[RMDB]
RNA sequence: GGGAACGACUCGAGUAGAGUCGAAAAAGGACGCCGGCGAUGUAUUCAACACCGUCGAGACCAUCAAGCGGCAGCUGCGCACCUUGGAGACAUUGGGUAAGCCGGUCGUCGCGGCCAUCAACGGGGCGUGGAGAGUAAGAUUCGUCUUACUCUCCACAAAAGAAACAACAACAACAAC
Reactivity to DMS in 0.01 (KOAc 150mM, MgCl2 10mM, bicine 150mM(pH8.5), 24C), signal-to-noise 3, nucleotides 027 to 126: a070g010g010a100c050g020c080c000g010g000c010g010a060u010g000u000a070u000u020c200a090a060c040a060c050c020g000u000c010g000a150g000a160c040c020a090u000c110a090a130g000c030g000g010c040a060g030c030u010g000c090g020c030a100c040c040u000u010g000g010a180g000a100c060a080u010u000g010g010g020u000a080a150g000c010c020g000g010u000c050g030u000c030g000c040g020g000c020c020a040u000c100a070a070c100g000g010g010g030c300
Reactivity to 2A3 in 0.01 (KOAc 150mM, MgCl2 10mM, bicine 150mM(pH8.5), 24C), signal-to-noise 3, nucleotides 027 to 126: a000g050g010a050c040g080c120c000g030g030c030g030a040u040g030u110a160u110u300c090a070a030c010a020c030c010g000u030c010g010a040g030a050c020c000a060u100c080a120a000g020c020g010g050c030a010g040c020u070g000c020g000c080a080c010c000u010u070g010g010a080g020a060c040a110u070u130g050g000g030u080a110a040g020c020c020g040g000u060c030g000u000c010g000c000g000g000c020c010a110u110c010a040a050c030g000g010g020g000c030